[RMDB]
RNA sequence: GGGAACGACUCGAGUAGAGUCGAAAAGGGGUCGGAAUCGAUAAGUCGUGAGCGAAGCGAAGAACUGUACUGAAGCCUCCACGGUACAGGGAGCUUCCCACGACUUUUGACGAUUCCGACGGAGGCACCCAAAGUGCCGCAGUUCGCUGCGGCACAACAUAUGUUACGUCUUCGGACGUAACAUAUGAAAAGAAACAACAACAACAAC
Reactivity to DMS in 0.01 (KOAc 150mM, MgCl2 10mM, bicine 150mM(pH8.5), 24C), signal-to-noise 1, nucleotides 027 to 156: g010g000g040g080u010c010g000g000a040a020u000c000g010a080u010a050a000g010u000c010g040u030g000a160g040c140g040a040a050g010c000g030a130a150g020a100a210c020u000g010u000a000c000u000g030a060a090g010c000c000u000c010c020a300c020g020g020u010a010c000a020g000g000g000a100g010c030u000u000c010c010c000a010c000g010a010c000u000u000u010u000g020a230c070g000a050u000u000c000c000g030a000c010g010g000a010g030g070c020a050c020c020c010a030a090a160g050u010g000c000c000g030c000a000g040u000u010c300g050c010u000g040c020g010g040c030a000c000a000a150
Reactivity to 2A3 in 0.01 (KOAc 150mM, MgCl2 10mM, bicine 150mM(pH8.5), 24C), signal-to-noise 3, nucleotides 027 to 156: g030g000g030g000u000c010g020g010a010a010u000c010g060a100u100a300a020g000u000c000g010u010g040a110g030c210g030a010a000g010c000g050a090a000g000a010a020c000u000g000u010a000c010u020g050a120a020g000c000c000u000c000c000a010c000g000g000u000a000c000a000g000g000g010a000g000c000u010u000c000c000c000a000c020g010a000c010u000u010u020u080g040a010c000g000a000u000u000c000c000g000a000c000g010g000a000g000g010c010a030c000c000c000a020a150a010g000u000g000c000c010g020c000a000g010u050u110c230g010c160u000g000c000g000g010c010a000c000a000a000